[RMDB]
RNA sequence: GGGAACGACUCGAGUAGAGUCGAAAAGAAAGUGUGCACCGUCUCAGCUUUUGUAUACGCAGGACUUUUUGCUGAGACUUUAGUCCUGCGUAGCAUGACUUCGGUCAUGCUACUGGUGCUCACGAAAGGGAACGGGGAGCUUCGGCUUUCCGUUCCCAAAAGAAACAACAACAACAAC
Reactivity to DMS in 0.01 (KOAc 150mM, MgCl2 10mM, bicine 150mM(pH8.5), 24C), signal-to-noise 3, nucleotides 027 to 126: g000a090a110a130g000u000g000u010g010c000a000c000c000g000u000c000u010c000a020g010c000u000u030u020u030g040u010a060u010a170c230g000c000a010g000g010a010c020u000u020u030u020u030g010c010u000g010a020g000a030c040u010u010u010a060g000u000c000c000u000g000c000g020u000a000g000c000a000u000g000a030c010u010u070c190g000g000u010c000a000u000g000c000u000a000c020u010g010g020u010g000c010u000c000a000c000g000a040a100a110
Reactivity to 2A3 in 0.01 (KOAc 150mM, MgCl2 10mM, bicine 150mM(pH8.5), 24C), signal-to-noise 7, nucleotides 027 to 126: g100a030a070a010g010u000g000u010g000c000a000c010c000g020u000c000u000c000a010g000c000u080u180u220u250g160u110a080u010a050c030g000c010a000g000g020a010c010u070u100u020u160u070g000c000u000g000a010g000a000c000u040u100u020a010g000u000c000c000u000g000c000g000u000a000g000c000a000u000g000a000c010u020u030c190g040g000u000c000a000u000g000c000u000a000c000u010g000g000u000g000c000u010c000a000c000g020a050a030a010